[RMDB]
RNA sequence: GGGAACGACUCGAGUAGAGUCGAAAAAAUUGGGACUAUGGUUGUAGUAUAAACAAUCAUCGUAAUGGUCGGCAUCAUUGCGAUUAUCAGUGCCCUCAGUCGGAGGUUGUCGACCCGAAUUGAGUAAUACUCCUCGAUUAUUCGUAAUCGAGGAGUAAAAAGAAACAACAACAACAAC
Reactivity to DMS in 0.01 (KOAc 150mM, MgCl2 10mM, bicine 150mM(pH8.5), 24C), signal-to-noise 4, nucleotides 027 to 126: a060a060u010u000g020g010g010a050c010u000a010u000g010g000u000u010g010u000a040g000u000a060u010a020a030a070c010a020a010u000c000a020u000c010g020u000a010a020u000g010g000u000c010g020g000c010a120u020c000a010u000u000g010c000g000a010u000u000a010u000c300a070g000u020g000c010c000c010u000c030a020g010u000c010g000g010a040g000g000u000u000g000u000c070g000a140c130c010c020g000a030a080u010u000g000a030g010u000a060a140
Reactivity to 2A3 in 0.01 (KOAc 150mM, MgCl2 10mM, bicine 150mM(pH8.5), 24C), signal-to-noise 1, nucleotides 027 to 126: a000a000u240u180g070g020g010a000c000u010a000u040g010g030u000u010g000u040a020g000u040a080u040a300a070a000c010a000a010u000c010a000u000c010g020u020a000a010u040g000g020u050c010g030g010c010a000u040c000a000u030u000g030c000g020a030u100u070a040u160c100a050g080u040g230c000c010c020u000c020a010g040u030c020g010g040a020g050g000u190u100g150u210c020g070a000c040c000c010g050a040a040u060u030g010a010g030u100a030a040
Structure probing data (DMS and 2A3) for a 177-nucleotide construct.
For 2A3, 965 sequencing reads were counted.
Reactivities are given for positions 27 through 126.
For DMS, 6,716 sequencing reads were counted.
The reactions ran in a buffer of 150 mM KOAc, 10 mM MgCl2 and 150 mM bicine (pH 8.5), at 24 C.
For DMS the reverse transcriptase was MarathonRT.